Chemical mapping of a 177-nucleotide RNA with 2A3 and DMS. The reactions ran in a buffer of 150 mM KOAc, 10 mM MgCl2 and 150 mM bicine (pH 8.5), at 24 C. The 2A3 profile rests on 1,320 reads. The data come from the RNA Mapping Database (RMDB), library OK1LIB.
RNA sequence: GGGAACGACUCGAGUAGAGUCGAAAAGAAAGAAAGAAGAAACGAGGCUCCUAAAGCGCAAAAAGAAAAACGAACGCGCAUUCGUAUCAGUUAAGGAGUCUCGAAAAGAAAGAAAGAAAGAAGAAAAAUAUGCUAGCGUAUUCGUACGCUAGCAUAUAAAAGAAACAACAACAACAAC
Reactivity to 2A3 in 0.01 (KOAc 150mM, MgCl2 10mM, bicine 150mM(pH8.5), 24C), signal-to-noise 2, nucleotides 027 to 126: g040a040a110a020g140a060a100a000g190a000a010g010a010a050a020c020g000a000g000g000c010u000c000c000u030a140a010a000g020c020g040c160a000a000a090a060a030g300a090a140a040a030a010c040g020a020a030c030g020c060g000c070a000u040u000c050g000u020a140u190c020a070g060u040u100a010a010g000g000a000g000u030c000u000c000g000a000a010a000a000g040a000a050a000g110a170a000a000g120a030a020a030g100a070a000g140a000a100a040a030
Reactivity to DMS in 0.01 (KOAc 150mM, MgCl2 10mM, bicine 150mM(pH8.5), 24C), signal-to-noise 2, nucleotides 027 to 126: g000a040a120a060g000a050a010a070g030a070a210g030a120a070a110c020g010a020g000g020c000u000c000c000u000a030a040a180g000c040g050c270a020a070a050a110a060g020a040a040a060a090a060c090g020a080a040c140g010c090g000c100a170u020u000c050g000u030a080u060c150a000g000u010u020a110a020g010g000a040g020u000c000u000c000g020a000a050a080a140g000a120a190a090g010a090a060a080g010a060a110a130g000a080a020g000a030a130a050a070